About this RNA
The record gives the reactivity of an RNA of 177 nucleotides to 2A3 and DMS. For 2A3 the reverse transcriptase was SuperScript II with manganese. The reactions ran in a buffer of 150 mM KOAc, 10 mM MgCl2 and 150 mM bicine (pH 8.5), at 24 C. Source: RMDB libraries RFM100 and RFMREP, as collected in RNAgym. 2A3 is a SHAPE reagent: it acylates the 2'-hydroxyl of flexible nucleotides of all four kinds.
RNA sequence: GGGAACGACUCGAGUAGAGUCGAAAAGACCACCAGCGCCUCGGGUGACCGGGGCGGCUCGGUAAACCCCACCCGGAGCAAGGCCAAGAGGAAGCCCUCGGGCUUCUGCGCAGGCGUUCGAGGGCGGAAUACCUAAUCAGUUCGCUGAUUAGGUAUUAAAAGAAACAACAACAACAAC
Reactivity to 2A3 in 0.01 (KOAc 150mM, MgCl2 10mM, bicine 150mM(pH8.5), 24C), signal-to-noise 4, nucleotides 027 to 126: g050a020c020c010a010c010c010a020g010c000g010c010c000u020c000g000g000g050u130g080a120c000c000g010g000g000g000c000g000g000c010u030c060g010g000u040a080a060a060c010c000c000c010a030c000c010c010g040g050a060g040c060a070a050g090g000c020c020a090a040g070a030g070g050a070a030g000c000c010c000u030c040g000g010g000c000u030u020c010u040g020c080g030c070a020g020g000c010g010u020u020c020g010a060g000g000g000c000g000g020
Reactivity to DMS in 0.01 (KOAc 150mM, MgCl2 10mM, bicine 150mM(pH8.5), 24C), signal-to-noise 9, nucleotides 027 to 126: g010a150c080c060a070c050c070a020g000c010g000c010c000u000c010g010g000g000u060g000a180c000c000g000g000g000g000c010g000g000c010u010c120g020g000u000a050a080a140c050c010c010c040a140c040c010c010g000g010a120g010c110a070a070g000g000c020c030a090a120g010a160g010g000a110a090g010c010c000c010u010c150g010g000g000c000u010u010c020u000g010c180g020c170a120g010g000c200g000u000u000c010g010a110g010g000g010c040g000g000